An RNA of 177 nucleotides, treated with 2A3 and DMS and read out base by base. In probing experiments dimethyl sulfate is read out at A N1 and C N3, which are open when not base-paired.
RNA sequence: GGGAACGACUCGAGUAGAGUCGAAAACGGAGGAGUUUGUGGGGCAUAAGCUGGGUGAAUUUUCUCCGACUCGUGUGUUCCGUGGGCAUAGCGGUUCUGACAAGAAAGUGGGAAGGUAGGUGAACUGCAUGAGGAGCAUCUUCGGAUGCUCCUCAUGAAAAGAAACAACAACAACAAC
Reactivity to 2A3 in 0.01 (KOAc 150mM, MgCl2 10mM, bicine 150mM(pH8.5), 24C), signal-to-noise 2, nucleotides 027 to 126: c000g000g000a050g050g020a030g020u010u060u060g090u070g040g010g020g020c010a080u040a190a050g010c020u020g010g030g030u090g070a050a050u120u100u060u000c020u030c020c010g030a000c000u020c030g040u030g000u000g000u010u010c030c000g000u140g020g030g000c080a050u070a080g020c020g020g030u000u000c020u060g010a020c000a040a110g010a080a050a010g070u100g000g060g010a060a030g060g000u060a020g000g050u090g030a030a040c000u020g010
Reactivity to DMS in 0.01 (KOAc 150mM, MgCl2 10mM, bicine 150mM(pH8.5), 24C), signal-to-noise 2, nucleotides 027 to 126: c050g000g010a060g000g000a080g000u010u030u040g020u000g000g000g020g020c030a090u030a110a030g020c020u000g010g000g000u000g000a080a070u000u010u010u010c020u030c030c000g040a030c050u000c030g030u020g000u000g000u000u000c020c050g030u040g070g000g000c070a050u030a060g000c030g000g010u000u010c020u020g000a070c110a110a070g040a010a070a060g010u020g020g000g010a080a050g040g000u000a030g000g000u000g020a010a040c030u010g000